[RMDB]
RNA sequence: GGGAACGACUCGAGUAGAGUCGAAAAAUCAGUUUUACUUUCUGCUCUCUGGAAACGCCUGCUUCUUUUUUACCUGAGAGCAUUUUUUCGCAUUCUGAUUUCGUUAGUUUAGAUUUUGAAUAUCUUGAAUACCGAGACAAUUCGUUGUCUCGGUAUUAAAAGAAACAACAACAACAAC
Reactivity to DMS in 0.01 (KOAc 150mM, MgCl2 10mM, bicine 150mM(pH8.5), 24C), signal-to-noise 1, nucleotides 027 to 126: a020u010c030a030g000u000u000u000u010a040c070u000u010u010c070u010g000c020u010c000u000c010u000g000g010a070a060a150c300g010c090c040u020g000c070u020u020c010u000u020u030u020u070u010a130c000c010u000g010a010g010a000g000c000a000u000u000u010u000u010u020c120g030c210a020u000u000c020u000g010a020u030u010u000c040g010u010u000a090g020u020u000u000a040g000a120u010u010u000u010g010a140a060u010a050u020c010u000u000g000
Reactivity to 2A3 in 0.01 (KOAc 150mM, MgCl2 10mM, bicine 150mM(pH8.5), 24C), signal-to-noise 1, nucleotides 027 to 126: a010u040c030a020g000u020u010u020u150a080c030u140u170u170c050u010g000c000u010c000u010c010u050g000g090a040a070a040c170g070c100c070u120g110c000u210u270c050u070u200u110u040u130u060a110c010c010u010g000a000g000a000g000c000a000u020u000u030u000u020u110c010g030c030a040u050u010c000u000g030a030u000u060u030c010g110u030u020a130g190u020u040u210a080g030a230u140u050u030u070g150a130a010u110a060u110c030u000u060g030